Conditions: 150 mM KOAc, 10 mM MgCl2 and 150 mM bicine (pH 8.5), 24 C. An RNA of 177 nucleotides, treated with DMS and 2A3 and read out base by base. As a SHAPE reagent, 2A3 marks flexible, mostly unpaired nucleotides at the ribose 2'-OH. For DMS, 4,682 sequencing reads were counted. 2A3 adducts were read by reverse transcription with SuperScript II with manganese.

[RMDB]
RNA sequence: GGGAACGACUCGAGUAGAGUCGAAAACGAGUAUCGGAUUUAGACUCAGGAUAAGAGAUGUCCCCAGCAGAAUAAGCAUCUAUUGGACAAUAGUAAAACCGGGAAACAUACUUUUGAUUAACAGCACAGUACGAUCCAUAUUCGUAUGGAUCGUACUAAAAGAAACAACAACAACAAC
Reactivity to DMS in 0.01 (KOAc 150mM, MgCl2 10mM, bicine 150mM(pH8.5), 24C), signal-to-noise 4, nucleotides 027 to 126: c010g010a190g000u040a020u020c050g010g000a160u010u010u000a120g010a050c000u000c060a130g010g000a300u060a060a260g020a090g000a110u000g000u000c030c010c010c020a110g020c110a020g020a100a090u020a050a130g000c060a060u010c050u000a080u000u010g020g020a130c060a060a060u000a020g010u010a060a050a070a040c050c020g000g010g020a100a070a040c210a050u000a030c060u010u000u010u030g000a140u030u010a050a030c120a050g000c110a030c200
Reactivity to 2A3 in 0.01 (KOAc 150mM, MgCl2 10mM, bicine 150mM(pH8.5), 24C), signal-to-noise 6, nucleotides 027 to 126: c020g000a010g100u140a160u270c000g000g080a030u060u070u140a050g020a010c000u000c020a020g140g060a080u070a150a030g020a000g020a020u090g030u020c000c000c000c000a030g020c010a010g050a150a050u190a110a020g010c000a020u030c020u040a040u040u040g020g060a020c050a080a030u020a070g080u050a020a020a030a070c030c010g000g030g020a040a040a050c070a030u130a090c010u080u140u050u040g080a110u090u120a070a040c040a050g050c050a020c020